[RMDB]
RNA sequence: GGGAACGACUCGAGUAGAGUCGAAAAGUAGGGAAAAUGGGAGCAGCGGAAUCUAUCAACACUGUCAACAUCGUGACAAAGGCUUACGCUAAGAUCAUGACAACCAUGGUGACGGAUCAGGACAUUACGUUUGACAUGCCUUCGGGCAUGUCAAACGAAAAGAAACAACAACAACAAC
Reactivity to DMS in 0.01 (KOAc 150mM, MgCl2 10mM, bicine 150mM(pH8.5), 24C), signal-to-noise 1, nucleotides 027 to 126: g000u010a020g000g000g000a040a120a090a110u000g000g000g000a120g000c050a040g000c130g000g010a040a140u000c080u010a080u000c110a020a060c060a060c070u000g000u000c060a030a110c120a080u000c080g080u000g030a020c090a010a250a220g000g000c020u030u000a180c130g010c000u000a050a120g000a020u000c030a050u000g000a050c040a040a160c110c160a050u010g000g000u000g000a020c070g020g020a030u030c130a090g010g000a100c130a030u040u010a080

This 177-nucleotide RNA was probed chemically with DMS. Values cover nucleotides 27 to 126. The reactions ran in a buffer of 150 mM KOAc, 10 mM MgCl2 and 150 mM bicine (pH 8.5), at 24 C.